[RMDB]
RNA sequence: GGGAACGACUCGAGUAGAGUCGAAAAUAACCUCAUGGAACUGAUGUCGUGGGAUGCCUGUGUUAGUUCCCGUACUCCGUGCUUCUUGGAGUACACAUAGCCCAGGGAAUCGCCAACAUUACACGAGGAGGGUAGCUCAUUUCGAUGAGCUACCCUCAAAAGAAACAACAACAACAAC
Reactivity to 2A3 in 0.01 (KOAc 150mM, MgCl2 10mM, bicine 150mM(pH8.5), 24C), signal-to-noise 2, nucleotides 027 to 126: u200a010a030c010c020u050c020a040u040g100g040a190a070c190u160g020a140u040g050u050c100g040u080g040g000g000a070u080g030c000c020u020g000u000g030u050u080a030g000u140u120c000c000c000g000u000a000c000u000c000c000g060u120g100c110u170u220c000u110u170g010g010a000g000u000a000c000a000c000a000u090a000g040c000c030c000a000g020g010g100a100a010u020c010g020c130c000a080a010c000a080u140u140a030c020a010c130g030a010g130